[RMDB]
RNA sequence: GGGAACGACUCGAGUAGAGUCGAAAAAUGAGCAAGGCAUGUUUCCUGGGUGAUCAUCAGAGGCAUUGGCUCUCCAAAGCCCCCACACCCCUUGGUCAGCAUCAGCAUGAGCUCAGGAAAGCGCAGGGAUUCUCGGUACGUUCGCGUACCGAGAAUCAAAAGAAACAACAACAACAAC
Reactivity to DMS in 0.01 (KOAc 150mM, MgCl2 10mM, bicine 150mM(pH8.5), 24C), signal-to-noise 1, nucleotides 027 to 126: a120u020g020a050g040c070a160a100g000g040c180a050u000g000u000u000u000c020c070u000g000g000g000u020g010a100u000c010a080u010c110a130g000a110g010g040c030a180u000u000g030g000c050u000c140u000c090c030a050a060a220g010c010c000c040c010c160a040c130a150c020c010c040c130u000u000g000g040u010c100a040g010c020a090u000c040a080g000c120a080u000g000a100g020c010u000c010a070g010g000a020a070a060g020c130g010c050a020g000g010